[RMDB]
RNA sequence: GGGAACGACUCGAGUAGAGUCGAAAACUUGUACGCUUCGGCGUACAAGAAAUCCCAGGUAUGCAUCCAACAACAACAACAACAGAUGCUUACCAUGUUGUUAAACCAAAGACUUCGGUCUUUGGAAACCCUAAUACACGUUCGCGUGUAUUAGGGUAAAAGAAACAACAACAACAAC
Reactivity to DMS in 0.01 (KOAc 150mM, MgCl2 10mM, bicine 150mM(pH8.5), 24C), signal-to-noise 2, nucleotides 027 to 126: c000u000u000g010u000a000c010g060c000u010u030c210g030g000c000g010u000a000c000a000a000g000a010a110a190u000c010c010c000a070g030g000u010a040u000g010c000a040u000c000c140a100a050c190a120a030c140a050a100c130a070a050c120a040a050c180a060g000a050u000g000c030u000u000a030c000c010a190u030g000u000u020g000u000u000a030a130a140c000c000a000a000a000g010a020c000u000u000c190g000g010u000c000u000u020u000g000g020a000a080
Reactivity to 2A3 in 0.01 (KOAc 150mM, MgCl2 10mM, bicine 150mM(pH8.5), 24C), signal-to-noise 1, nucleotides 027 to 126: c000u010u020g000u000a020c020g010c000u030u060c230g140g000c030g000u000a000c000a000a030g000a010a030a000u020c010c000c000a010g000g020u020a000u030g030c000a020u030c080c020a020a040c000a080a030c010a030a000c010a030a040c230a040a010c040a080g030a020u010g000c000u010u000a010c010c010a040u080g030u010u020g030u000u030a080a070a030c000c000a000a000a000g010a000c000u060u090c270g100g000u000c000u020u010u010g010g000a050a000